[RMDB]
RNA sequence: GGGAACGACUCGAGUAGAGUCGAAAAGACUACCAGUUCGCUGGUAGUCAAAGGGAAACGGGAAGGCGGCGGCGUCCGCCGUAACAAACGCAAUAAGAAAAAAAAGACGAAGCUUCGGCUUCGUCAACUUAAAACGUACCUUCGGGUACGUUUUAAGAAAAGAAACAACAACAACAAC
Reactivity to 2A3 in 0.01 (KOAc 150mM, MgCl2 10mM, bicine 150mM(pH8.5), 24C), signal-to-noise 1, nucleotides 027 to 126: g000a000c000u000a010c000c000a010g000u000u100c210g040c090u000g000g000u000a000g000u000c000a040a000a000g050g010g020a050a040a060c060g000g000g060a190a000g000g010c000g010g020c040g030g060c030g170u300c030c000g000c020c000g020u000a000a000c000a000a020a000c000g000c050a010a070u220a170a100g220a110a100a000a000a020a020a010a030g000a000c000g000a000a010g000c000u050u110c230g080g000c000u000u010c010g040u000c000a000a010
Reactivity to DMS in 0.01 (KOAc 150mM, MgCl2 10mM, bicine 150mM(pH8.5), 24C), signal-to-noise 1, nucleotides 027 to 126: g000a000c000u000a000c000c000a000g000u000u000c220g010c010u010g010g010u000a000g030u000c000a010a030a100g000g000g000a030a110a090c090g010g000g000a220a130g000g010c010g010g030c020g000g010c060g000u000c000c000g030c000c010g000u020a000a120c070a000a020a020c030g000c010a040a130u010a080a190g030a030a020a010a100a090a100a170a100g000a020c000g010a000a010g020c000u000u000c190g010g010c010u000u000c000g020u000c000a010a090
An RNA of 177 nucleotides, treated with 2A3 and DMS and read out base by base. The RNA was probed in 150 mM KOAc, 10 mM MgCl2 and 150 mM bicine (pH 8.5) at 24 C. 2A3 is a SHAPE reagent: it acylates the 2'-hydroxyl of flexible nucleotides of all four kinds. For DMS the reverse transcriptase was MarathonRT. Source: RMDB library M2PK50, as collected in RNAgym. The 2A3 profile rests on 1,454 reads.